[RMDB]
RNA sequence: GGGAACGACUCGAGUAGAGUCGAAAACGGACGGGAUUUUAGCCCGGUUGCAGGUUUACCCAUUUCGUGCUGGGUCCUGGACCCACUUAAGAUAAUAGAAAUAUUAUCGAUUUCUUUACCGUCCGGAGGCUAGCUCAGUAUUCGUACUGAGCUAGCCAAAAGAAACAACAACAACAAC
Reactivity to DMS in 0.01 (KOAc 150mM, MgCl2 10mM, bicine 150mM(pH8.5), 24C), signal-to-noise 1, nucleotides 027 to 126: c000g010g010a040c000g020g000g020a110u000u010u000u000a120g040c050c100c300g020g000u010u020g010c010a010g010g010u030u010u010a080c030c000c010a030u000u010u000c260g010u010g030c300u000g000g000g000u000c010c000u000g010g010a010c030c010c170a010c050u010u000a070a200g000a020u000a050a010u000a000g000a300a080a110u000a000u000u000a010u000c010g000a220u020u000u000c050u030u000u000a160c040c010g000u000c000c000g030g010a100
Source: RMDB library OK2TRN, as collected in RNAgym.
Chemical mapping of a 177-nucleotide RNA with DMS.
The RNA was probed in 150 mM KOAc, 10 mM MgCl2 and 150 mM bicine (pH 8.5) at 24 C.
Reactivities are given for positions 27 through 126.